[RMDB]
The data come from the RNA Mapping Database (RMDB), library OK1LIB. Structure probing data (2A3 and DMS) for a 177-nucleotide construct. Values are in units of 0.01, from 0 to 300, in steps of 10. For DMS the reverse transcriptase was MarathonRT.
RNA sequence: GGGAACGACUCGAGUAGAGUCGAAAAUAUUGCCACAUAUAAUCAUUUUCUAGCUGCUGCGGAUACUGCCAAGAGUAGAUGCCACCUUGCGAUAUCAGCAGUUGUAUCAGGAGCAAUCCGAGCUGGGCGUCUUUAGAAAGUUCGCUUUCUAAAGACGAAAAGAAACAACAACAACAAC
Reactivity to 2A3 in 0.01 (KOAc 150mM, MgCl2 10mM, bicine 150mM(pH8.5), 24C), signal-to-noise 8, nucleotides 027 to 126: u210a050u070u180g090c040c010a160c080a050u210a050u110a170a150u180c130a100u040u100u090u070c030u050a030g020c010u020g000c000u020g020c030g010g010a020u020a050c020u060g060c090c020a040a020g100a040g080u100a050g050a130u170g080c010c010a030c010c020u020u030g010c020g030a030u030a020u090c010a000g000c000a010g000u030u070g040u060a110u090c060a030g010g040a040g020c030a050a040u010c010c020g010a010g000c000u010g000g000g020
Reactivity to DMS in 0.01 (KOAc 150mM, MgCl2 10mM, bicine 150mM(pH8.5), 24C), signal-to-noise 3, nucleotides 027 to 126: u040a110u030u010g000c040c030a140c130a110u050a060u010a100a080u080c100a120u020u010u010u010c020u010a040g010c020u010g000c000u000g000c010g000g010a020u000a000c020u000g020c210c040a020a050g000a130g010u020a070g020a120u020g000c140c080a150c050c010u000u000g010c040g000a050u000a030u000c020a030g000c030a030g010u010u000g010u040a090u020c130a090g040g020a030g000c140a090a090u000c020c000g000a100g000c010u000g010g000g000